[RMDB]
RNA sequence: GGGAACGACUCGAGUAGAGUCGAAAAGGUUGCGCUUGGUUUGUAAAACCUAAUCGCACUAGUGUUGUUUCUUUUAAUGAAUGGGCUCUUGCCAACCAAUUCACUGAAUUUGUUGGCACUCAAUCCGAAAGGGAGUAGUUCGCUACUCCCAAAAGAAACAACAACAACAAC
Reactivity to DMS in 0.01 (KOAc 150mM, MgCl2 10mM, bicine 150mM(pH8.5), 24C), signal-to-noise 1, nucleotides 027 to 129: g000g000u000u040g010c030g020c220u040u020g080g000u100u010u040g030u050a010a070a080a050c010c010u050a100a260u010c050g000c030a070c000u020a000g000u050g050u190u090g080u050u020u200c070u040u110u040u000a050a070u080g000a000a000u020g060g000g090c170u010c140u060u090g000c060c000a030a030c000c010a000a000u010u010c030a230c130u030g030a000a000u000u000u000g000u000u040g000g040c020a220c000u060c060a040a080u020c000c010g010a190a150a120
Reactivity to 2A3 in 0.01 (KOAc 150mM, MgCl2 10mM, bicine 150mM(pH8.5), 24C), signal-to-noise 4, nucleotides 027 to 129: g130g000u180u060g000c000g000c010u010u030g020g040u100u010u080g290u170a060a080a030a000c040c000u040a030a030u070c020g000c010a000c060u040a040g040u000g000u070u050g020u000u000u040c030u000u010u030u160a150a090u290g050a030a090u080g010g000g000c000u030c010u030u080g000c020c020a000a000c020c070a000a000u050u040c200a240c300u140g060a000a000u010u000u000g000u000u000g000g000c010a000c020u100c030a020a080u100c060c050g000a190a080a020

Structure probing data (DMS and 2A3) for a 170-nucleotide construct.
For DMS, 5,481 sequencing reads were counted.
The reactions ran in a buffer of 150 mM KOAc, 10 mM MgCl2 and 150 mM bicine (pH 8.5), at 24 C.